[RMDB]
RNA sequence: GGGAACGACUCGAGUAGAGUCGAAAACUUGGGCAGUGUGGUUGUGCCCGACGUGAAUAGAAUGGCCAUUAGAUCGUCGUCAGAAUUCUUGUCUAGGCCAAGCAUUCGACCGAGCAUCGUAACGGGACAUGAGAAUAUUGUUCGCAAUAUUCUCAUGAAAAGAAACAACAACAACAAC
Reactivity to DMS in 0.01 (KOAc 150mM, MgCl2 10mM, bicine 150mM(pH8.5), 24C), signal-to-noise 9, nucleotides 027 to 126: c050u000u000g010g000g010c040a070g020u000g020u000g010g010u000u010g020u010g020c020c020c070g010a030c090g010u000g000a080a060u010a090g010a100a100u010g010g010c010c040a160u010u010a090g010a080u000c240g010u000c070g010u000c090a110g010a080a080u000u000c030u000u000g010u000c030u010a100g010g000c060c010a030a080g000c060a070u000u000c040g000a080c050c020g000a070g010c080a090u000c060g010u010a070a110c090g000g000g010a290
Reactivity to 2A3 in 0.01 (KOAc 150mM, MgCl2 10mM, bicine 150mM(pH8.5), 24C), signal-to-noise 7, nucleotides 027 to 126: c010u050u060g020g020g000c060a080g030u040g030u050g200g250u120u090g060u140g050c010c020c000g000a040c030g030u060g040a030a020u050a090g140a100a080u070g030g000c020c020a060u100u100a040g070a140u110c060g050u010c010g030u010c080a030g060a140a070u080u000c020u060u180g030u010c030u070a050g000g050c010c000a000a010g000c010a030u020u060c010g010a020c020c020g010a020g020c010a050u080c040g060u050a080a040c050g020g000g040a020
The record gives the reactivity of an RNA of 177 nucleotides to DMS and 2A3.
For 2A3, 17,282 sequencing reads were counted.
2A3 adducts were read by reverse transcription with SuperScript II with manganese.